[RMDB]
RNA sequence: GGGAACGACUCGAGUAGAGUCGAAAAUCUCUGAAUGUAUUUAUUACGCAUGGCUUUUAUUCAUUGCUUUCUAACUGUGAUGGGAGUUUUUUUCUUGUUGCAUAAAUGAACGUGGGCGAGGUUUUUAGCUCGAUGUUACAUUCGUGUAACAUCGAGCAAAAGAAACAACAACAACAAC
Reactivity to 2A3 in 0.01 (KOAc 150mM, MgCl2 10mM, bicine 150mM(pH8.5), 24C), signal-to-noise 1, nucleotides 027 to 126: u000c000u000c050u080g140a000a000u170g140u110a150u040u260u000a140u060u160a050c120g000c020a000u010g010g000c030u000u050u000u100a110u020u260c080a070u000u100g000c030u000u100u050c040u040a200a300c000u120g000u000g050a010u070g000g030g000a020g050u000u300u000u000u000u000u000c030u000u020g000u030u000g020c030a030u000a300a240a050u110g000a000a000c000g000u000g010g040g070c000g000a050g000g060u020u190u000u000u000a000
Structure probing data (2A3) for a 177-nucleotide construct. The data come from the RNA Mapping Database (RMDB), library RFM100. For 2A3 the reverse transcriptase was SuperScript II with manganese.